[RMDB]
RNA sequence: GGGAACGACUCGAGUAGAGUCGAAAAUGUUACAUUGUGCUAAUUUCAAUGUAUUGUUUGCUAUGACCAUGCCUAAGACUUGUUUCGGACCCAUAGUCCGAAAGAUCUUUGUUGAUGGCGUGCCAUUGUCUAUUUUAACGUUCGCGUUAAAAUAGACAAAAGAAACAACAACAACAAC
Reactivity to 2A3 in 0.01 (KOAc 150mM, MgCl2 10mM, bicine 150mM(pH8.5), 24C), signal-to-noise 3, nucleotides 027 to 126: u040g030u000u020a000c000a000u010u000g020u040g080c120u170a190a240u100u200u060c000a010a000u000g020u010a020u030u120g050u030u040u070g100c040u070a060u130g030a040c030c000a010u020g000c020c000u040a060a000g000a010c010u070u130g040u080u030u000c000g000g010a000c010c030c100a160u160a010g000u000c010c000g000a000a000a000g030a010u040c030u030u130u140g010u010u040g020a060u070g000g000c000g000u020g020c010c000a060u030u010
Reactivity to DMS in 0.01 (KOAc 150mM, MgCl2 10mM, bicine 150mM(pH8.5), 24C), signal-to-noise 3, nucleotides 027 to 126: u000g010u010u000a010c010a000u010u010g010u000g020c190u010a130a160u010u010u010c000a010a010u010g000u000a020u000u000g020u000u000u000g020c090u000a070u000g010a090c200c000a030u000g010c020c000u000a120a300g010a010c030u000u000g000u000u000u000c010g010g000a010c010c140c260a120u010a180g010u000c000c000g020a020a010a000g010a180u010c050u000u000u010g020u000u000g010a250u000g000g000c000g040u000g000c090c020a090u000u000
This 177-nucleotide RNA was probed chemically with 2A3 and DMS.
The data come from the RNA Mapping Database (RMDB), library 15KREP.
The 2A3 profile rests on 2,403 reads.
The reactions ran in a buffer of 150 mM KOAc, 10 mM MgCl2 and 150 mM bicine (pH 8.5), at 24 C.